[RMDB]
RNA sequence: GGGAACGACUCGAGUAGAGUCGAAAAUUUCUGGACAUUUCAUAUCAAUGGAAUGACAACAUAUAAUCUCUUUUUUGAGACAGGGUUUCACUGUGUCACCCAGGCUGGAGUACAAUGACAUGAUCUCAGCUGACUGCAACCUCCUCCUCCCAGGCUACACCUUUUAGGGGUUCGCCCCUAAAAGGUGAAAAGAAACAACAACAACAAC
Reactivity to 2A3 in 0.01 (KOAc 150mM, MgCl2 10mM, bicine 150mM(pH8.5), 24C), signal-to-noise 1, nucleotides 027 to 156: u050u040u010c060u170g110g050a080c000a010u000u010u010c020a020u250a180u160c130a180a070u030g000g010a010a000u030g020a050c010a110a050c050a060u180a020u180a100a260u030c010u020c000u000u120u040u160u280u150g040a030g000a040c000a030g030g000g020u010u120u050c120a120c010u020g020u000g110u110c020a100c000c000c000a020g040g000c020u020g060g040a040g040u090a050c030a060a150u160g050a050c040a130u200g130a170u020c010u000c040a050g000c000u010g090a120c010u020g010c010a070a070c030c000u030c020c000u020c020c000u010c020c000c000a000g000g000c010u070a110
Background: The record gives the reactivity of an RNA of 207 nucleotides to 2A3. The 2A3 profile rests on 404 reads. The data come from the RNA Mapping Database (RMDB), library OK3TST.